An RNA of 177 nucleotides, treated with DMS and 2A3 and read out base by base. For DMS, 1,150 sequencing reads were counted. DMS adducts were read by reverse transcription with MarathonRT.

RNA sequence: GGGAACGACUCGAGUAGAGUCGAAAAGCCUCUGCAUAGAAAUGCCGUUGACCCCCGUCUUCAUGCCAGCGCUGCUUGUGCUGAGCGGUUGCCGGCGAAUAACUGUACAAUGUGCAUGCAAUCCAUCGCGAUAAAUGACGUUCGCGUCAUUUAUCGCAAAAGAAACAACAACAACAAC
Reactivity to DMS in 0.01 (KOAc 150mM, MgCl2 10mM, bicine 150mM(pH8.5), 24C), signal-to-noise 1, nucleotides 027 to 126: g000c000c000u000c000u080g000c010a040u000a000g020a120a150a170u000g010c000c030g010u000u000g030a300c120c060c130c030c000g000u030c020u000u040c080a090u110g000c040c050a060g000c050g020c000u000g010c090u080u020g010u000g000c090u050g000a110g000c010g000g000u000u010g000c000c070g080g000c050g000a080a050u010a000a080c000u000g040u000a000c000a000a110u000g000u000g000c000a000u100g040c010a030a090u000c080c000a230u120c080
Reactivity to 2A3 in 0.01 (KOAc 150mM, MgCl2 10mM, bicine 150mM(pH8.5), 24C), signal-to-noise 5, nucleotides 027 to 126: g010c000c000u010c020u020g000c000a020u020a040g130a050a300a020u080g010c000c000g010u010u070g080a140c010c030c010c010c000g040u050c000u040u040c040a120u240g000c000c000a000g000c010g020c040u150g060c070u270u300g020u060g030c040u040g030a030g040c000g020g000u010u130g020c000c000g010g000c030g000a050a040u120a020a030c030u020g000u060a010c030a090a090u060g000u010g000c010a020u070g000c000a000a080u030c030c010a080u120c100